[RMDB]
Background
This 177-nucleotide RNA was probed chemically with 2A3 and DMS. Reactivities are rounded to 0.1 and cut off at 0 and 3. It was measured as part of the RMDB library OK1LIB. DMS adducts were read by reverse transcription with MarathonRT. The 2A3 profile rests on 26,769 reads. The DMS profile rests on 17,424 reads.
RNA sequence: GGGAACGACUCGAGUAGAGUCGAAAACUAUUUAUAGACAGAACAGUGGAAAACGUAUAUCGCUAUAAACCUUAAACACCGAGUCUUCCAGUCGUACCAUUCCACAUAGGCGAGGCAUAAGCGAAAGGAUAUCAUGAUAGUUCGCUAUCAUGAUAUCAAAAGAAACAACAACAACAAC
Reactivity to 2A3 in 0.01 (KOAc 150mM, MgCl2 10mM, bicine 150mM(pH8.5), 24C), signal-to-noise 9, nucleotides 027 to 126: c010u020a070u040u100u020a110u050a030g100a040c060a030g070a150a020c020a040g040u070g080g110a120a110a010a000c020g030u040a070u020a030u190c010g000c020u010a010u030a130a090a080c000c010u080u130a090a120a010c060a020c030c030g010a010g040u000c000u020u000c010c010a020g040u030c020g010u030a060c020c010a030u050u030c020c010a040c010a070u080a040g060g010c020g010a020g020g010c030a040u050a150a030g010c040g060a070a010a000g150
Reactivity to DMS in 0.01 (KOAc 150mM, MgCl2 10mM, bicine 150mM(pH8.5), 24C), signal-to-noise 7, nucleotides 027 to 126: c050u010a090u020u010u010a070u020a050g010a080c060a190g010a060a050c110a120g020u020g010g010a080a050a070a060c090g000u020a070u020a050u020c040g000c020u000a050u010a050a060a080c090c060u020u020a050a060a070c130a080c080c010g010a020g010u010c030u000u010c010c020a060g000u010c030g020u000a040c050c040a080u010u010c030c030a030c090a090u010a060g000g010c040g000a030g000g000c040a030u010a040a070g000c060g020a050a070a090g020